An RNA of 177 nucleotides, treated with DMS and 2A3 and read out base by base. DMS (dimethyl sulfate) methylates the pairing face of unpaired adenines and cytosines. DMS adducts were read by reverse transcription with MarathonRT. The data come from the RNA Mapping Database (RMDB), library TTRDES. The 2A3 profile rests on 7,919 reads.
RNA sequence: GGGAACGACUCGAGUAGAGUCGAAAAGAUAUGGACACGUUCUUUUGACGGCAUGUAUCGGAAACGAUACCUCUGCCGAUAAGAACAGUGUCCUAAGUCAAAAGUGCAAAAGUUCGCUUUUGCACAAGUUCACACCUAAGUUCGCUUAGGUGUGAACAAAAGAAACAACAACAACAAC
Reactivity to DMS in 0.01 (KOAc 150mM, MgCl2 10mM, bicine 150mM(pH8.5), 24C), signal-to-noise 3, nucleotides 027 to 126: g000a030u000a280u000g000g000a020c000a010c000g000u000u000c000u000u010u000u010g070a280c300g020g000c010a020u010g020u000a000u000c010g000g000a100a050a170c000g010a010u000a000c000c020u000c060u010g000c010c000g010a050u010a010a000g000a000a010c020a090g040u000g010u000c000c000u000a000a070g000u000c010a080a110a120a130g020u000g000c010a010a020a000a000g010u010u030c300g010c020u000u010u000u020g000c010a000c010a020a050
Reactivity to 2A3 in 0.01 (KOAc 150mM, MgCl2 10mM, bicine 150mM(pH8.5), 24C), signal-to-noise 3, nucleotides 027 to 126: g020a020u050a020u120g000g000a000c010a000c020g010u010u000c050u100u150u260u300g300a280c110g000g000c000a020u170g000u010a010u010c000g010g000a040a030a010c010g000a000u000a000c000c000u080c020u020g030c010c000g010a010u010a010a000g000a000a000c050a030g000u000g000u000c010c000u000a020a010g000u000c020a020a040a180a000g010u010g000c000a010a020a010a020g020u070u160c270g070c220u010u000u000u010g020c000a000c000a010a020